[RMDB]
RNA sequence: GGGAACGACUCGAGUAGAGUCGAAAAGAUAUGGAGGUUUGUAGGGAGCUCGUCGGAAACGACAGAGCUUUGAUCUACACUGACCUCCUAAGUCAAACCUAAACGGUAGUUCGCUACCGUUUAGGAAGCACAAUGAAAAGUUCGCUUUUCAUUGUGCAAAAGAAACAACAACAACAAC
Reactivity to DMS in 0.01 (KOAc 150mM, MgCl2 10mM, bicine 150mM(pH8.5), 24C), signal-to-noise 3, nucleotides 027 to 126: g000a030u010a300u010g000g010a020g010g000u000u000u000g000u010a000g000g000g000a000g000c000u000c000g000u000c000g000g000a050a090a140c000g010a010c000a060g020a010g000c000u000u000u000g000a060u000c000u000a000c010a050c300u010g000a010c000c000u000c000c000u000a010a050g000u010c020a140a080a210c000c000u000a000a000a000c000g000g010u000a000g010u000u000c270g000c010u000a000c000c000g010u000u000u000a010g000g000a010a090
Reactivity to 2A3 in 0.01 (KOAc 150mM, MgCl2 10mM, bicine 150mM(pH8.5), 24C), signal-to-noise 2, nucleotides 027 to 126: g020a010u050a050u160g000g000a000g030g010u040u080u080g000u020a020g000g090g000a000g000c010u000c000g010u010c000g010g040a180a040a040c020g000a010c060a130g010a010g000c000u050u050u030g010a020u030c000u000a010c030a010c090u070g060a040c010c000u020c010c000u000a040a000g020u010c020a090a050a160c000c010u000a010a000a000c000g040g000u000a010g010u060u070c300g020c160u010a000c000c020g000u000u000u010a000g000g000a020a000
Record summary:
Chemical mapping of a 177-nucleotide RNA with DMS and 2A3. The reactions ran in a buffer of 150 mM KOAc, 10 mM MgCl2 and 150 mM bicine (pH 8.5), at 24 C. Reactivities are given for positions 27 through 126. The DMS profile rests on 3,440 reads.